[RMDB]
RNA sequence: GGGAACGACUCGAGUAGAGUCGAAAAGCUUAGCGAAUUAAGGCGUUGUUCCACCCUAGUGGUACUUACCCCACGCAAAGCCUGUGUGCAGGCAGGGUAUGUGCCGUGGGGUACAACUGGUCGGGAGCUGGGCUGCUCCCUUGAUGAGCCCAUGGCAGGGCGCGAUGCAGUUCGCUGCAUCGCGCCCAAAAGAAACAACAACAACAAC
Reactivity to 2A3 in 0.01 (KOAc 150mM, MgCl2 10mM, bicine 150mM(pH8.5), 24C), signal-to-noise 1, nucleotides 027 to 156: g010c000u010u030a000g000c000g090a150a090u120u060a180a000g010g000c000g010u040u040g050u130u030c100c000a030c010c000c000u130a140g180u080g020g000u000a000c000u050u000a000c010c010c010c000a020c080g000c300a250a020a010g040c060c000u060g030u020g040u070g200c010a000g040g000c020a000g020g000g000u010a020u020g000u000g040c000c000g050u000g000g020g000g000u010a000c010a030a000c060u110g010g090u000c000g000g110g000a110g000c010u010g000g130g000c000u000g000c050u030c020c000c100u020u080g040a030u050g010a020g030c010c020c040a110u150g050g050c160a080

This 207-nucleotide RNA was probed chemically with 2A3.
Values cover nucleotides 27 to 156.